This 177-nucleotide RNA was probed chemically with 2A3 and DMS. For DMS, 1,411 sequencing reads were counted. Conditions: 150 mM KOAc, 10 mM MgCl2 and 150 mM bicine (pH 8.5), 24 C. Source: RMDB library M2PK50, as collected in RNAgym. For DMS the reverse transcriptase was MarathonRT.
RNA sequence: GGGAACGACUCGAGUAGAGUCGAAAAGAGUCACACUUCGGUGUGACUCAAAUAAGCUGACCAGCUAUGAGGUCUACAUCGUCAUGCACAAAUAGAAUAUAAAAACCCUAAUCUUCGGAUUAGGGAAGGAUACGAUAAACUUCGGUUUAUCGUAUCCAAAAGAAACAACAACAACAAC
Reactivity to 2A3 in 0.01 (KOAc 150mM, MgCl2 10mM, bicine 150mM(pH8.5), 24C), signal-to-noise 3, nucleotides 027 to 126: g030a000g010u020c010a000c020a000c010u050u070c240g040g000u010g010u020g000a000c000u000c000a000a010a000u000a000a000g040c010u000g030a020c000c000a000g020c050u100a080u140g120a080g090g000u000c050u090a050c010a160u110c030g110u020c030a020u080g040c040a020c040a070a090a030u190a080g130a180a000u150a040u050a210a090a050a090a090c000c000c000u000a000a000u000c030u030u030c280g040g000a010u000u000a000g010g000g000a010a000
Reactivity to DMS in 0.01 (KOAc 150mM, MgCl2 10mM, bicine 150mM(pH8.5), 24C), signal-to-noise 2, nucleotides 027 to 126: g000a020g010u000c000a010c000a030c000u000u010c230g050g030u000g020u000g000a000c000u000c000a000a060a050u010a100a090g020c040u000g000a120c040c050a060g020c040u000a040u010g000a060g000g000u010c050u000a030c140a010u000c130g000u000c040a040u000g000c060a100c100a020a100a060u000a080g000a060a070u000a070u010a060a050a100a120a110c000c000c000u010a000a000u000c000u000u000c200g000g000a010u000u000a000g000g010g030a020a000